[RMDB]
RNA sequence: GGGAACGACUCGAGUAGAGUCGAAAACAAGAUCGGUGGAUAGCAGCCCUAUCAAUAUCUAGGAGAACUGUGCUAUGUUUAGAAGAUUAGGUAGUCUCUAAACAGAACAAGUUACCUGCUGAACAAAAAAAUCCAAUGGCGUUCGCGCCAUUGGAAAGACGAACUACGUGUUCGCACGUAGUUCGUCAAAAGAAACAACAACAACAAC
Reactivity to 2A3 in 0.01 (KOAc 150mM, MgCl2 10mM, bicine 150mM(pH8.5), 24C), signal-to-noise 1, nucleotides 027 to 156: c000a000a150g070a120u130c030g010g070u050g060g010a080u040a030g020c020a010g010c030c000c000u070a120u170c090a100a070u070a060u200c060u080a000g000g010a080g020a030a020c010u060g030u050g210c030u030a020u040g010u000u000u000a030g000a300a020g010a050u090u080a110g240g000u140a050g040u060c000u000c000u020a000a000a000c000a000g050a010a010c010a010a070g000u000u010a020c000c000u010g000c010u060g040a050a000c030a010a080a030a030a050a000a050u010c000c030a000a000u000g030g010c000g000u020u010c140g000c010g000c120c010a010u000u000g000g000a000a000a000
Structure probing data (2A3) for a 207-nucleotide construct. For 2A3, 560 sequencing reads were counted. Reactivities are given for positions 27 through 156. It was measured as part of the RMDB library M2RFPK.